An RNA of 177 nucleotides, treated with DMS and 2A3 and read out base by base. DMS (dimethyl sulfate) methylates the pairing face of unpaired adenines and cytosines. Conditions: 150 mM KOAc, 10 mM MgCl2 and 150 mM bicine (pH 8.5), 24 C. The DMS profile rests on 4,747 reads. For DMS the reverse transcriptase was MarathonRT.
RNA sequence: GGGAACGACUCGAGUAGAGUCGAAAAGAUAUGGAGUGAUUGGGAGCUGUUCGGAAACGAAUACAGCGAAGAACAAUACACUCCUAAGUCAAAGACCUUAAGUGUAGUUCGCUACACUUAAGGUCAACUUAUCAUUAGCCUUCGGGCUAAUGAUAAGAAAAGAAACAACAACAACAAC
Reactivity to DMS in 0.01 (KOAc 150mM, MgCl2 10mM, bicine 150mM(pH8.5), 24C), signal-to-noise 4, nucleotides 027 to 126: g000a060u010a300u000g000g000a020g030u000g010a050u000u000g000g000g000a130g010c000u000g020u010u000c000g000g000a130a080a190c010g000a030a060u010a080c000a000g020c020g010a070a160g010a120a120c010a010a010u010a150c000a020c020u000c000c010u010a020a100g000u000c040a080a120a130g010a010c000c000u000u000a000a010g020u010g000u000a010g010u020u020c260g000c010u000a000c000a010c000u000u000a000a010g000g000u000c010a010a050
Reactivity to 2A3 in 0.01 (KOAc 150mM, MgCl2 10mM, bicine 150mM(pH8.5), 24C), signal-to-noise 3, nucleotides 027 to 126: g030a020u080a050u150g000g000a010g000u010g010a020u000u020g030g000g020a050g000c010u010g000u020u010c010g000g040a080a060a050c000g000a050a060u300a140c040a010g000c030g030a300a020g030a020a000c000a020a040u280a240c010a020c000u000c000c000u010a140a020g010u020c020a120a080a130g000a000c000c000u010u010a000a000g000u010g000u010a040g020u040u090c300g010c190u020a000c000a000c000u000u000a000a000g000g000u010c000a000a010